Description:
This 177-nucleotide RNA was probed chemically with DMS and 2A3. The DMS profile rests on 4,335 reads. For 2A3 the reverse transcriptase was SuperScript II with manganese. DMS adducts were read by reverse transcription with MarathonRT. Conditions: 150 mM KOAc, 10 mM MgCl2 and 150 mM bicine (pH 8.5), 24 C.
[RMDB]
RNA sequence: GGGAACGACUCGAGUAGAGUCGAAAAUGGCUAAUUUACGCGCCUCUUCUUUGGCGUUAUCCUCACAGAGAUUUUGGGUGAGCGUCCCCAUUGGGCAGUAGGCGCACCACGUGCGCGGACGGUAGAGCGGAUAAAUCCUUUUCGAAGGAUUUAUCCGAAAAGAAACAACAACAACAAC
Reactivity to DMS in 0.01 (KOAc 150mM, MgCl2 10mM, bicine 150mM(pH8.5), 24C), signal-to-noise 4, nucleotides 027 to 126: u000g010g020c090u020a100a100u010u010u000a110c160g000c030g000c020c010u010c160u010u010c050u000u000u000g000g020c040g000u000u000a050u010c090c030u020c060a040c080a140g020a110g010a090u000u000u020u010g020g010g010u010g000a080g010c050g000u000c020c020c010c040a180u010u000g000g010g020c040a110g000u000a080g020g000c020g010c010a050c030c110a110c230g010u000g000c020g010c010g000g010a040c050g000g010u000a080g010a100g010
Reactivity to 2A3 in 0.01 (KOAc 150mM, MgCl2 10mM, bicine 150mM(pH8.5), 24C), signal-to-noise 3, nucleotides 027 to 126: u090g070g000c040u070a040a100u100u070u180a100c080g000c010g010c000c030u040c060u170u040c010u100u040u030g010g000c010g020u030u050a050u010c020c000u050c020a060c040a030g180a040g050a190u080u150u210u290g100g020g010u060g060a040g000c010g020u000c010c000c000c010a040u100u120g020g040g020c040a030g060u120a040g030g090c000g000c020a030c040c050a090c120g020u000g000c000g000c020g030g040a010c010g030g020u100a070g010a010g070